[RMDB]
RNA sequence: GGGAACGACUCGAGUAGAGUCGAAAAGGCGAACCCGCCAGGAGAUGUCCUGGCAUCCCCCUUGGGAACUCAUACCUUGGGGGAGGACAACCCGGGGAACUGAAACAUCUAAGUACCCGGAGGAGAAGGACAUCAUAUAUUUCGAUAUAUGAUGUCCAAAAGAAACAACAACAACAAC
Reactivity to 2A3 in 0.01 (KOAc 150mM, MgCl2 10mM, bicine 150mM(pH8.5), 24C), signal-to-noise 8, nucleotides 027 to 126: g100g030c060g030a050a060c000c000c030g000c000c000a010g040g010a080g020a100u170g130u190c000c000u000g010g010c000a010u000c000c000c000c010c000u000u010g010g000g040a100a070c040u040c160a070u150a200c000c000u010u000g000g000g000g000g000a010g000g000a020c030a030a090c020c000c000g000g000g010g010a020a010c050u090g030a120a120a070c050a080u070c040u060a080a020g000u000a010c000c000c020g010g010a070g000g050a100g050a050a080
Reactivity to DMS in 0.01 (KOAc 150mM, MgCl2 10mM, bicine 150mM(pH8.5), 24C), signal-to-noise 7, nucleotides 027 to 126: g020g000c080g010a070a200c000c020c040g020c020c000a020g000g010a040g000a120u030g010u000c000c000u000g000g010c030a060u000c010c000c000c010c000u000u000g000g000g000a110a110c290u030c160a120u010a200c010c000u000u000g010g000g020g020g010a010g000g010a060c130a150a140c070c000c000g020g000g000g010a120a130c140u010g000a080a130a130c220a110u020c020u000a060a030g010u000a170c020c000c000g000g000a050g000g000a140g020a170a150
Structure probing data (2A3 and DMS) for a 177-nucleotide construct. DMS (dimethyl sulfate) methylates the pairing face of unpaired adenines and cytosines. The reactions ran in a buffer of 150 mM KOAc, 10 mM MgCl2 and 150 mM bicine (pH 8.5), at 24 C. It was measured as part of the RMDB libraries RFM100 and RFMREP.